[RMDB]
RNA sequence: GGGAACGACUCGAGUAGAGUCGAAAAGCAAUCAUGUCGAUGGCCUGCUUGAUGUCCACCUCUUCUUGAUCCUCACUGCUGUUGAGCUUGAGGAGGAUCUGUUUUAGAAGGUGGCUCUGGUACAGUACUUUCAUGGUGUGAAUUAUGCCAAGAUUCAGGUCCUAAAAUAGUUCGCUAUUUUAGGACCAAAAGAAACAACAACAACAAC
Reactivity to 2A3 in 0.01 (KOAc 150mM, MgCl2 10mM, bicine 150mM(pH8.5), 24C), signal-to-noise 7, nucleotides 027 to 156: g050c020a020a110u060c010a020u060g070u080c050g110a110u050g020g010c020c010u020g010c020u030u040g010a050u070g120u080c000c000a010c010c010u030c020u060u020c020u040u110g010a010u010c000c010u010c030a070c030u030g020c020u050g130u300u270g230a020g010c040u100u070g110a100g060g020a000g000g000a010u000c000u010g040u010u170u020u030a140g000a220a030g040g010u010g000g000c000u000c000u010g010g000u070a080c020a040g020u050a080c030u030u090u090c020a030u050g040g020u020g020u010g070a050a070u130u070a060u200g030c010c020a030a040g000a070u000u000c020a030
Reactivity to DMS in 0.01 (KOAc 150mM, MgCl2 10mM, bicine 150mM(pH8.5), 24C), signal-to-noise 3, nucleotides 027 to 156: g030c030a090a120u000c030a060u020g010u000c030g010a090u000g010g010c040c010u000g010c040u010u020g000a100u000g010u010c000c000a040c010c000u000c100u010u000c100u000u000g000a030u000c020c010u000c010a190c050u010g000c020u010g030u010u000g010a090g020c010u000u010g010a160g020g020a050g010g030a030u000c010u000g010u000u010u000u010a110g020a060a040g020g050u010g010g010c020u010c020u010g020g010u000a050c080a050g010u000a050c040u010u000u010c070a090u000g030g000u010g000u010g000a080a140u000u000a110u000g020c030c010a050a110g020a300u010u000c050a150